[RMDB]
RNA sequence: GGGAACGACUCGAGUAGAGUCGAAAACAGAUGAUGUUCGCAUCAUCUGAAAUAAAAGCCAUGCAGGAAGGAAGGAGCAUGGCUACCAACCAACCAAAAUAAAAAUCUGUUCCUUCGGGAACAGAAACUAACUAAUACACUUCGGUGUAUUAGUUAGAAAAGAAACAACAACAACAAC
Reactivity to DMS in 0.01 (KOAc 150mM, MgCl2 10mM, bicine 150mM(pH8.5), 24C), signal-to-noise 4, nucleotides 027 to 126: c020a000g000a000u000g010a020u000g010u000u010c250g020c000a000u010c010a000u000c000u020g010a020a060a100u000a070a060a090a050g020c000c000a000u000g010c010a100g010g000a110a130g020g010a110a110g020g010a150g000c000a010u000g000g010c000u000a010c040c040a090a140c120c090a030a120c110c100a040a080a090a080u020a020a090a110a120a080u010c000u000g010u000u000c000c000u000u010c160g040g020g000a010a000c000a000g000a010a020a080
Reactivity to 2A3 in 0.01 (KOAc 150mM, MgCl2 10mM, bicine 150mM(pH8.5), 24C), signal-to-noise 8, nucleotides 027 to 126: c000a000g000a000u010g000a000u010g030u080u100c200g010c100a000u000c000a000u000c000u000g000a010a010a000u070a010a070a010a000g000c010c000a000u010g000c020a030g170g210a270a040g130g040a100a040g040g060a120g020c000a000u000g000g000c000u010a010c010c010a070a030c010c020a010a040c010c030a070a080a080a040u270a070a110a050a010a030u010c000u000g000u000u000c010c000u010u020c250g050g010g000a000a000c000a000g000a000a000a000
Conditions: 150 mM KOAc, 10 mM MgCl2 and 150 mM bicine (pH 8.5), 24 C. Chemical mapping of a 177-nucleotide RNA with DMS and 2A3. For DMS, 4,117 sequencing reads were counted. Reactivities are given for positions 27 through 126. The data come from the RNA Mapping Database (RMDB), library M2PK50. 2A3 adducts were read by reverse transcription with SuperScript II with manganese.